An RNA of 177 nucleotides, treated with 2A3 and DMS and read out base by base. For DMS, 4,684 sequencing reads were counted. The data come from the RNA Mapping Database (RMDB), library OK1LIB. Reactivities are given for positions 27 through 126.

[RMDB]
RNA sequence: GGGAACGACUCGAGUAGAGUCGAAAAAACAUGGCAAAGCCUUUGAAAGCUUGUCUGGGAGAAGGUGCGAUGAUAGUUGCAUAACUUCGUGCAAGAUGCUGGUCCACACAGGGGCUGCCCCUUGCUCUCCACCUCUAUUCUUCGGAAUAGAGGUGGAAAAAGAAACAACAACAACAAC
Reactivity to 2A3 in 0.01 (KOAc 150mM, MgCl2 10mM, bicine 150mM(pH8.5), 24C), signal-to-noise 3, nucleotides 027 to 126: a000a010c080a010u060g000g030c020a070a030a080g010c030c000u090u100u110g160a120a040a020g020c030u020u030g020u020c030u020g050g060g020a090g000a040a010g040g010u030g000c040g010a000u050g030a070u080a210g070u040u080g000c010a040u020a110a060c030u000u000c020g090u060g010c000a030a050g000a040u090g010c020u070g020g070u000c010c000a090c000a010c040a160g000g000g050g000c000u020g020c000c000c000c000u010u050g000c000u010c030
Reactivity to DMS in 0.01 (KOAc 150mM, MgCl2 10mM, bicine 150mM(pH8.5), 24C), signal-to-noise 3, nucleotides 027 to 126: a110a100c080a040u020g010g010c040a050a030a070g020c010c010u000u000u000g000a170a090a160g000c010u020u000g040u000c020u010g010g000g020a140g000a060a030g020g000u000g000c030g000a040u020g010a090u050a070g000u000u010g000c020a050u010a110a120c030u000u020c050g000u010g010c040a060a020g000a040u000g000c010u000g000g010u000c050c050a100c170a120c200a110g010g010g010g010c000u010g000c050c080c050c010u000u010g010c050u000c100